[RMDB]
RNA sequence: GGGAACGACUCGAGUAGAGUCGAAAAAUAGGAUGCCCAAAUUUCUGUUUAGAGCUAUUCCUUGUGUUUUGGGCGUAGACACAAAGUGUUUUUAAGUGUAGAACAGCAUCUAAUGGUAAUUUUUGAAUGAUCAUAGAGACUUCGGUCUCUAUGAUCAAAAAGAAACAACAACAACAAC
Reactivity to DMS in 0.01 (KOAc 150mM, MgCl2 10mM, bicine 150mM(pH8.5), 24C), signal-to-noise 1, nucleotides 027 to 126: a110u030a090g000g020a110u000g000c000c030c030a080a080a080u000u000u010c050u000g020u010u000u010a060g000a150g000c050u000a030u010u000c000c040u000u020g040u010g000u000u000u010u010g010g000g000c060g020u010a030g000a000c000a020c010a010a050a150g020u010g010u000u000u000u000u000a040a140g010u000g000u020a150g000a020a030c050a000g010c030a040u000c020u000a040a050u010g010g000u010a090a060u000u010u010u010u010g000a070a150